[RMDB]
RNA sequence: GGGAACGACUCGAGUAGAGUCGAAAAUUUUAUCAGCAUGUAAUCAAUGGUUGCAAAGAUACGGCAUGCUUGCUCUGCUAUAAGAGGAACCGACUUACUAGAGUUGAAGCUUCUACCGUUGUCUGUGGUUUAGCUCAUUGUUCGCAAUGAGCUAAACAAAAGAAACAACAACAACAAC
Reactivity to DMS in 0.01 (KOAc 150mM, MgCl2 10mM, bicine 150mM(pH8.5), 24C), signal-to-noise 1, nucleotides 027 to 126: u020u000u010u000a050u030c090a010g000c010a070u010g010u010a070a040u000c010a040a170u010g010g010u050u000g020c040a060a070a280g010a070u000a070c190g020g010c040a020u010g010c040u000u000g010c020u000c060u000g010c080u040a060u000a040a040g000a060g000g000a090a110c120c020g010a020c020u000u000a010c020u000a080g010a010g010u000u010g020a100a180g020c110u000u000c020u000a110c110c070g000u000u000g000u010c110u020g020u010g000